[RMDB]
RNA sequence: GGGAACGACUCGAGUAGAGUCGAAAAUAGCCAUCACACCGAGCGAUGUACGUACUGGAACGUCGCGUGGACGCUGCAGCAGAUUGUGGUGAGCGUCGUCGCCAGUGAUCUUCUUCUCAAUGAAUGGCAUGGUCCUUCCAUUCGUGGAAGGACCAUGAAAAGAAACAACAACAACAAC
Reactivity to 2A3 in 0.01 (KOAc 150mM, MgCl2 10mM, bicine 150mM(pH8.5), 24C), signal-to-noise 2, nucleotides 027 to 126: u050a010g030c000c000a030u030c040a020c020a010c020c080g000a010g020c030g010a040u020g030u140a040c100g030u050a020c020u060g000g030a080a020c010g010u030c000g000c000g000u090g100g030a050c050g000c040u060g000c010a040g010c030a100g080a300u200u120g030u030g030g020u060g040a030g000c010g020u050c000g000u040c080g040c000c010a020g000u020g040a050u040c010u040u000c000u090u000c000u000c000a040a140u150g100a130a020u040g060g050
Reactivity to DMS in 0.01 (KOAc 150mM, MgCl2 10mM, bicine 150mM(pH8.5), 24C), signal-to-noise 4, nucleotides 027 to 126: u010a130g020c030c040a010u000c080a110c090a040c120c070g000a050g040c300g000a030u000g000u000a050c140g020u010a040c080u010g000g050a100a040c020g010u000c010g030c060g030u020g020g000a130c290g000c020u000g020c040a040g000c110a080g000a170u010u000g010u020g020g010u000g010a150g030c020g020u000c000g000u000c130g010c010c010a050g000u010g010a040u010c020u000u010c030u010u010c020u000c010a050a080u020g000a150a050u000g010g010